[RMDB]
RNA sequence: GGGAACGACUCGAGUAGAGUCGAAAACUGUGUUUAAGUACUGGUGGUUCCGUCCACUGGUGCACUCGCUUGGCACCUAAGCAGUGUUCCGUCAUUGCUUAGUGUGGAAACAACGUUCUGUCGUUGUCGAAUACGCUAGAUUCGUCUAGCGUAUUCGAAAAGAAACAACAACAACAAC
Reactivity to 2A3 in 0.01 (KOAc 150mM, MgCl2 10mM, bicine 150mM(pH8.5), 24C), signal-to-noise 2, nucleotides 027 to 126: c050u050g010u000g060u090u100u090a150a010g000u020a010c010u010g010g010u020g000g070u230u300c070c040g090u100c030c000a000c000u000g010g030u010g000c010a010c020u030c030g070c040u110u140g130g000c030a000c000c000u000a010a000g000c000a000g000u010g020u270u240c070c090g090u180c000a010u020u020g000c010u010u000a000g010u040g000u010g140g080a030a190a000c020a010a030c010g090u140u090c100u160g190u160c020g020u000u050g030u000
Reactivity to DMS in 0.01 (KOAc 150mM, MgCl2 10mM, bicine 150mM(pH8.5), 24C), signal-to-noise 1, nucleotides 027 to 126: c050u000g020u010g020u000u000u010a030a020g030u000a010c000u000g020g040u000g010g010u020u010c280c210g000u010c000c000a000c000u000g000g020u010g000c010a060c020u000c020g010c060u030u020g000g000c030a030c030c000u000a000a000g000c010a000g040u000g020u000u000c300c190g000u000c000a020u010u000g010c000u000u000a010g000u000g010u000g000g010a070a120a080c010a010a010c000g000u010u000c160u000g020u000c010g000u000u000g000u000

An RNA of 177 nucleotides, treated with 2A3 and DMS and read out base by base. It was measured as part of the RMDB library RFMREP.